Conditions: 150 mM KOAc, 10 mM MgCl2 and 150 mM bicine (pH 8.5), 24 C. An RNA of 207 nucleotides, treated with DMS and 2A3 and read out base by base. DMS adducts were read by reverse transcription with MarathonRT.

[RMDB]
RNA sequence: GGGAACGACUCGAGUAGAGUCGAAAAGCAGGGGUGCGUCCGUUGACUGUGAUCUGAGCGCCGUCAACGUGGCGGUGGACGAACACACCGUAGGUAUCCCAGCCGACGGAUGAGGUGUACAGCCCCGACGAAUUCAAGGUGCGGCUGACCGCGGUGGACUCUCUCAGAUAUUCGUAUCUGAGAGAGUAAAAGAAACAACAACAACAAC
Reactivity to DMS in 0.01 (KOAc 150mM, MgCl2 10mM, bicine 150mM(pH8.5), 24C), signal-to-noise 2, nucleotides 027 to 156: g050c120a140g000g030g030g040u000g010c020g020u000c000c000g020u000u010g010a030c010u000g020u000g000a100u000c060u000g010a250g040c050g040c010c030g000u000c010a030a030c050g000u000g010g000c010g010g040u000g010g000a120c090g010a100a060c040a060c000a150c000c010g030u010a040g050g000u000a060u010c000c000c010a300g020c050c020g020a070c020g000g000a140u000g010a070g000g030u000g020u000a100c100a240g000c000c000c020c010g000a120c040g000a120a100u000u000c070a110a100g000g020u000g010c050g020g030c030u010g010a060c030c000g040c030g010g020u000g000g000
Reactivity to 2A3 in 0.01 (KOAc 150mM, MgCl2 10mM, bicine 150mM(pH8.5), 24C), signal-to-noise 3, nucleotides 027 to 156: g140c090a040g000g000g000g020u050g040c000g030u020c010c010g010u020u010g010a020c020u000g010u050g050a140u100c200u290g100a110g140c020g000c020c010g000u020c010a040a060c050g120u240g020g020c020g030g010u050g000g020a060c080g010a150a010c090a020c020a030c010c010g010u030a130g000g030u090a060u090c000c030c010a000g000c010c000g000a020c020g010g010a030u140g100a050g000g120u090g040u130a100c050a000g030c000c000c020c000g010a040c030g070a040a080u120u100c050a030a100g070g020u130g030c020g000g000c050u040g020a070c000c040g030c000g030g000u020g010g020